[RMDB]
RNA sequence: GGGAACGACUCGAGUAGAGUCGAAAAGUCCUGCAGCAGCAGCUGGCAGCUGUAGAGGGCGCUGUCGUCUGGCUGCAGCUGCAGCAGGGUGAGGUCGUAGGUGAUGCCGCCGGGGCCGGGCGCCAAGCUUGACAUCAGGGUUCGCCCUGAUGUCAAGAAAAGAAACAACAACAACAAC
Reactivity to 2A3 in 0.01 (KOAc 150mM, MgCl2 10mM, bicine 150mM(pH8.5), 24C), signal-to-noise 1, nucleotides 027 to 126: g020u050c000c010u000g030c000a050g010c000a000g030c000a000g000c000u120g050g000c000a010g000c010u100g070u190a070g070a080g070g100g010c040g010c060u170g060u130c000g040u030c050u110g040g040c000u030g000c000a000g000c010u050g000c000a000g020c000a020g020g000g050u030g030a030g010g030u060c040g070u130a040g020g080u070g050a210u120g130c090c030g000c050c000g050g040g000g000c000c000g030g040g000c030g030c000c000a040a000g000
Reactivity to DMS in 0.01 (KOAc 150mM, MgCl2 10mM, bicine 150mM(pH8.5), 24C), signal-to-noise 2, nucleotides 027 to 126: g000u000c060c010u000g020c020a040g000c090a140g000c010a040g030c010u000g020g020c010a000g000c020u000g030u030a060g010a190g020g010g010c130g000c140u010g000u000c050g020u000c080u010g010g020c000u000g030c020a050g010c000u000g020c010a040g010c080a060g000g000g010u010g010a120g000g010u010c040g030u020a100g020g010u010g000a120u000g000c060c040g020c040c040g000g020g000g000c030c010g030g010g010c060g000c040c040a040a120g010
Background
An RNA of 177 nucleotides, treated with 2A3 and DMS and read out base by base. DMS adducts were read by reverse transcription with MarathonRT. Values are in units of 0.01, from 0 to 300, in steps of 10.